The data come from the RNA Mapping Database (RMDB), library OK3TST.
The record gives the reactivity of an RNA of 207 nucleotides to 2A3.
The reactions ran in a buffer of 150 mM KOAc, 10 mM MgCl2 and 150 mM bicine (pH 8.5), at 24 C.
2A3 adducts were read by reverse transcription with SuperScript II with manganese.
[RMDB]
RNA sequence: GGGAACGACUCGAGUAGAGUCGAAAAUAUUUUUUGUGUGUCUACUAAAACUUUUUUCUUUGUGAUUAUUAGGAAGUUUACAUAAAACAUCUAUAGUUACAGCAGCUUAUUUUAGGUUGAUAACAAUUUAAUACUGAUAGCAUAUAAAACAUGAAACCCCUAUUGUACGUUUCGACGUACAAUAGGGAAAAGAAACAACAACAACAAC
Reactivity to 2A3 in 0.01 (KOAc 150mM, MgCl2 10mM, bicine 150mM(pH8.5), 24C), signal-to-noise 1, nucleotides 027 to 156: u040a040u030u150u030u000u110u000g070u010g000u030g020u000c030u030a080c040u040a070a080a130a130c050u060u190u120u080u250u080c000u140u130u020g000u010g030a050u030u110a030u060u050a050g000g070a100a050g000u010u060u080a070c010a010u300a030a090a040a000c030a010u020c000u030a060u010a140g000u000u000a030c010a010g060c030a030g020c050u230u000a100u050u210u010u080a040g100g000u050u090g010a050u040a160a060c030a040a040u090u250u070a060a000u090a110c020u020g060a060u080a020g000c060a000u080a000u140a180a090a040a020c080a020u190g020a070a000a170c000